[RMDB]
The record gives the reactivity of an RNA of 177 nucleotides to DMS and 2A3. The 2A3 profile rests on 6,957 reads. DMS adducts were read by reverse transcription with MarathonRT. The DMS profile rests on 10,715 reads. The reactions ran in a buffer of 150 mM KOAc, 10 mM MgCl2 and 150 mM bicine (pH 8.5), at 24 C.

RNA sequence: GGGAACGACUCGAGUAGAGUCGAAAACGGCGCUGUCCUGGCGAGUCACAUGCAGGAUUUUUGCCCAGAACCAUUCGCUGGAAUAAAUACCACCAAUGUAGCGGGAGUAGUCAACGUUGCCCGGCGCUACAUAAUCUAGCUUCGGCUAGAUUAUGUAAAAAGAAACAACAACAACAAC
Reactivity to DMS in 0.01 (KOAc 150mM, MgCl2 10mM, bicine 150mM(pH8.5), 24C), signal-to-noise 8, nucleotides 027 to 126: c130g010g010c080g030c120u000g010u010c040c010u000g010g020c040g010a090g010u000c110a070c100a080u010g020c080a080g010g010a080u000u000u000u010u000g010c160c010c020a090g000a090a080c140c090a070u000u000c100g010c030u000g000g010a110a130u000a050a060a080u000a120c030c020a080c060c050a050a070u000g020u000a060g010c050g000g000g000a080g020u010a060g010u000c060a060a090c070g010u000u010g010c020c010c020g010g000c080g010c130
Reactivity to 2A3 in 0.01 (KOAc 150mM, MgCl2 10mM, bicine 150mM(pH8.5), 24C), signal-to-noise 5, nucleotides 027 to 126: c010g040g020c040g000c030u030g020u050c010c020u030g130g040c040g040a060g140u130c070a030c020a140u170g030c040a050g020g020a020u070u020u020u100u150g010c010c000c010a030g020a080a040c040c030a090u090u070c070g020c050u030g000g060a070a050u130a080a090a040u150a140c010c020a030c020c010a080a080u120g020u080a080g040c020g020g020g000a010g050u110a010g040u040c030a050a040c040g030u030u060g030c010c010c000g030g010c040g000c030